[RMDB]
RNA sequence: GGGAACGACUCGAGUAGAGUCGAAAAAGAUGGCAGGUGAUGAUUGUGUGGCAGGUAGACAGGAUGAGGAUUAGAACAUGGAACAGUUUAGUAAAACAUCAUAUGUAUGUCUCAAAGAAAGCUAAAAAUAGUGAGCAAAAUUCGUUUUGCUCACUAUAAAAGAAACAACAACAACAAC
Reactivity to DMS in 0.01 (KOAc 150mM, MgCl2 10mM, bicine 150mM(pH8.5), 24C), signal-to-noise 4, nucleotides 027 to 126: a090g000a060u010g020g020c050a040g000g020u000g000a090u010g000a090u010u010g010u010g020u010g030g010c070a040g030g010u000a080g000a100c060a060g000g000a110u000g000a090g000g010a060u000u000a060g010a060a080c090a050u010g010g000a060a050c130a100g010u000u000u000a080g000u000a050a040a050a050c020a050u000c040a080u010a080u010g010u010a060u000g010u000c030u010c080a070a090a120g000a080a060a130g000c050u010a020a050a060a080
Reactivity to 2A3 in 0.01 (KOAc 150mM, MgCl2 10mM, bicine 150mM(pH8.5), 24C), signal-to-noise 1, nucleotides 027 to 126: a000g060a000u060g000g010c030a010g000g100u010g040a050u050g000a030u100u000g050u010g010u040g120g000c050a020g000g050u020a020g020a040c060a000g000g010a040u070g010a010g050g010a000u020u040a040g010a100a000c020a060u030g050g010a040a020c020a050g000u010u060u070a130g010u080a010a030a000a030c010a010u050c000a010u070a050u290g070u050a020u040g020u020c010u010c030a060a100a020g140a050a070a040g000c050u030a040a000a000a100
This 177-nucleotide RNA was probed chemically with DMS and 2A3. It was measured as part of the RMDB library OK2TST. DMS adducts were read by reverse transcription with MarathonRT. Reactivities are given for positions 27 through 126.